[RMDB]
RNA sequence: GGGAACGACUCGAGUAGAGUCGAAAAGAUAUGGACCAGGUAUUUGCAAUGAUGCUCAUCGGAAACGAUGAGUUGAGCAGGGUACUGGUCCUAAGUCAAACGUUCUCAGAGUUCGCUCUGAGAACGACUCCCAAUACAACUUCGGUUGUAUUGGGAGAAAAGAAACAACAACAACAAC
Reactivity to DMS in 0.01 (KOAc 150mM, MgCl2 10mM, bicine 150mM(pH8.5), 24C), signal-to-noise 4, nucleotides 027 to 126: g000a020u010a230u020g000g000a000c000c010a020g010g010u000a100u010u010u010g020c010a300a300u010g010a090u000g000c000u000c000a000u000c000g020g000a060a040a110c000g010a000u000g010a010g010u000u000g000a050g020c030a120g000g000g010u010a080c000u000g000g000u000c000c000u000a010a070g000u000c030a130a110a210c020g010u000u000c000u000c000a010g000a020g020u010u010c300g020c000u000c000u000g000a010g000a000a000c000g010a060
Reactivity to 2A3 in 0.01 (KOAc 150mM, MgCl2 10mM, bicine 150mM(pH8.5), 24C), signal-to-noise 5, nucleotides 027 to 126: g020a010u050a020u100g000g000a000c010c000a020g170g070u200a160u100u240u210g050c140a300a300u120g020a010u050g050c000u000c000a000u000c000g020g010a060a030a020c000g000a010u010g000a000g000u010u010g000a000g000c020a020g090g070g050u190a110c010u010g000g000u010c000c000u000a010a000g000u000c020a050a100a110c010g000u000u000c010u000c010a000g000a000g020u120u200c300g020c130u000c010u000g010a010g000a000a000c000g010a010
An RNA of 177 nucleotides, treated with DMS and 2A3 and read out base by base. For DMS, 5,437 sequencing reads were counted. The 2A3 profile rests on 9,969 reads. Reactivities are given for positions 27 through 126. DMS adducts were read by reverse transcription with MarathonRT. In probing experiments dimethyl sulfate is read out at A N1 and C N3, which are open when not base-paired.